[RMDB]
Conditions: 150 mM KOAc, 10 mM MgCl2 and 150 mM bicine (pH 8.5), 24 C.
This 177-nucleotide RNA was probed chemically with 2A3 and DMS.
RNA sequence: GGGAACGACUCGAGUAGAGUCGAAAAGAGUAGUAGGACUGGGAACAUAUGAGAAAGCAUGAGCUCUAUCCAUCUAUCCAUCCCCUCCCAUUCGCUAGAAUGUUGCAGGUGGAGAUUUCGCUCUUAUUUGAAGUUAUUUCUUCGGAAAUAACUUCAAAAAAGAAACAACAACAACAAC
Reactivity to 2A3 in 0.01 (KOAc 150mM, MgCl2 10mM, bicine 150mM(pH8.5), 24C), signal-to-noise 1, nucleotides 027 to 126: g030a000g030u090a000g010u010a020g040g050a050c050u000g020g020g010a050a020c030a050u140a100u130g090a090g050a100a120a010g060c050a030u080g010a010g010c020u030c010u030a060u030c010c020a020u020c010u060a100u070c010c010a090u000c000c010c000c000u020c000c000c000a000u030u000c010g060c050u030a060g030a050a040u040g040u100u060g120c060a020g030g110u130g050g020a030g000a010u070u110u060c090g020c070u000c010u010u010a070u010
Reactivity to DMS in 0.01 (KOAc 150mM, MgCl2 10mM, bicine 150mM(pH8.5), 24C), signal-to-noise 4, nucleotides 027 to 126: g000a050g020u000a040g010u000a160g010g000a050c060u000g010g020g010a030a070c070a080u000a090u020g000a140g010a120a110a090g010c100a050u000g010a080g010c010u000c020u010a120u000c020c010a090u000c060u000a050u000c070c070a110u010c010c010c000c040u000c030c040c000a050u000u010c030g010c210u020a080g000a030a040u000g000u000u010g030c120a030g000g010u000g020g000a050g000a120u010u010u000c100g020c120u000c000u020u000a110u000

The DMS profile rests on 2,780 reads. For 2A3, 955 sequencing reads were counted. DMS adducts were read by reverse transcription with MarathonRT. It was measured as part of the RMDB library RFMREP.